[RMDB]
RNA sequence: GGGAACGACUCGAGUAGAGUCGAAAAGCGCGAAGCGGUGUAGCGUCACUUUGAUGGCUGUACUAUGAAUUGAUGCAAGGUGUGGAGCGACCUUAAACAGUUCUGGUGGUGCUCUGAAUGGAGUGCUUGAGGCCUCGCCGAUUCGUCGGCGAGGCAAACAUCUAGAGAACUUCGGUUCUCUAGAUGUAAAAGAAACAACAACAACAAC
Reactivity to 2A3 in 0.01 (KOAc 150mM, MgCl2 10mM, bicine 150mM(pH8.5), 24C), signal-to-noise 2, nucleotides 027 to 156: g070c060g010c070g050a050a030g060c030g050g000u050g020u060a010g020c030g020u050c020a060c140u160u100u250g060a080u060g100g030c020u000g020u060a050c010u020a150u180g040a070a100u110u110g060a070u100g030c050a060a020g040g000u040g040u080g020g030a010g020c020g000a000c000c020u080u120a150a080a020c020a050g000u010u000c000u040g110g000u030g000g010u020g020c010u020c010u080g090a070a020u200g040g000a000g030u000g030c000u030u070g110a110g160g000c000c000u030c000g000c000c000g010a010u010u060c100g050u020c010g160g000c020g000a000g000g020c000a000a000
An RNA of 207 nucleotides, treated with 2A3 and read out base by base. Conditions: 150 mM KOAc, 10 mM MgCl2 and 150 mM bicine (pH 8.5), 24 C. The data come from the RNA Mapping Database (RMDB), library M2RFPK.